[RMDB]
The record gives the reactivity of an RNA of 177 nucleotides to DMS and 2A3. The reactions ran in a buffer of 150 mM KOAc, 10 mM MgCl2 and 150 mM bicine (pH 8.5), at 24 C. For 2A3 the reverse transcriptase was SuperScript II with manganese. The DMS profile rests on 5,699 reads. Source: RMDB library OK2TST, as collected in RNAgym.
RNA sequence: GGGAACGACUCGAGUAGAGUCGAAAAGCAGUACCCAGCGGCUACGUCCCCUCCAGCAGUCGCAACGUCACGCUGGGUGGCGGCCCGCCGGCGAACCUUCCUGAAGGAACCAUCGGAGCUUGGGGCACCGAAUAUAGAGGUUCGCCUCUAUAUUCGGAAAAGAAACAACAACAACAAC
Reactivity to DMS in 0.01 (KOAc 150mM, MgCl2 10mM, bicine 150mM(pH8.5), 24C), signal-to-noise 5, nucleotides 027 to 126: g000c040a090g010u010a080c070c000c010a070g010c020g020g020c080u000a050c060g010u000c010c020c010c050u020c070c060a090g020c080a090g010u000c070g010c090a110a080c100g010u000c120a080c040g000c020u000g020g000g010u000g010g020c040g010g010c120c030c020g000c070c040g000g000c040g010a070a110c070c020u000u000c030c060u000g010a070a080g020g010a080a080c090c030a080u010c040g010g000a090g010c050u000u000g020g000g020g010c130a160
Reactivity to 2A3 in 0.01 (KOAc 150mM, MgCl2 10mM, bicine 150mM(pH8.5), 24C), signal-to-noise 3, nucleotides 027 to 126: g020c030a010g050u040a040c010c010c000a000g010c030g020g030c110u160a060c030g100u120c010c000c010c010u090c030c010a030g000c010a010g110u090c030g020c090a100a080c040g060u070c040a020c060g000c010u010g030g040g000u020g030g010c030g000g000c020c000c000g020c020c000g000g010c020g000a030a040c010c010u040u050c010c040u100g090a100a030g040g000a050a060c030c000a040u070c030g010g050a050g060c050u060u090g050g000g010g010c030a020